[RMDB]
RNA sequence: GGGAACGACUCGAGUAGAGUCGAAAACGAGCCUCUGCCCCUGUAAAUGGCGCUGUGACCCAUUAGUACACGCAAAUGAUGUACAGAUUGAAGAGGUUCCGGCGCGGUUAACAAAUCCGGCAGCGUGUCAAGGUUGGCGCUUCGGUGCCAGCCUUGAAAAAGAAACAACAACAACAAC
Reactivity to DMS in 0.01 (KOAc 150mM, MgCl2 10mM, bicine 150mM(pH8.5), 24C), signal-to-noise 8, nucleotides 027 to 126: c100g000a090g000c040c020u020c020u010g010c010c000c070c030u000g000u000a040a030a010u010g000g020c010g020c010u000g000u010g000a030c000c000c030a160u020u010a090g010u000a000c000a010c050g010c270a130a110a100u030g000a130u010g010u000a000c000a170g010a160u030u040g000a130a090g000a140g000g000u000u000c080c000g000g000c010g010c010g000g000u000u010a060a040c030a020a070a050u020c220c240g010g010c000a030g000c260g000u020g000
Reactivity to 2A3 in 0.01 (KOAc 150mM, MgCl2 10mM, bicine 150mM(pH8.5), 24C), signal-to-noise 4, nucleotides 027 to 126: c020g000a010g050c000c000u010c000u000g000c000c000c000c010u010g000u010a000a030a000u060g100g000c000g000c000u010g020u040g010a000c000c000c000a010u010u080a030g010u000a000c000a000c010g040c030a030a050a090u180g060a060u010g010u000a000c020a010g070a040u050u100g060a090a020g100a080g010g000u040u000c000c000g010g000c000g000c000g030g000u000u010a020a000c000a010a090a040u030c000c000g000g000c000a000g000c010g040u030g010
The record gives the reactivity of an RNA of 177 nucleotides to DMS and 2A3.
For DMS the reverse transcriptase was MarathonRT.
Conditions: 150 mM KOAc, 10 mM MgCl2 and 150 mM bicine (pH 8.5), 24 C.
The 2A3 profile rests on 11,776 reads.
The data come from the RNA Mapping Database (RMDB), library OK1LIB.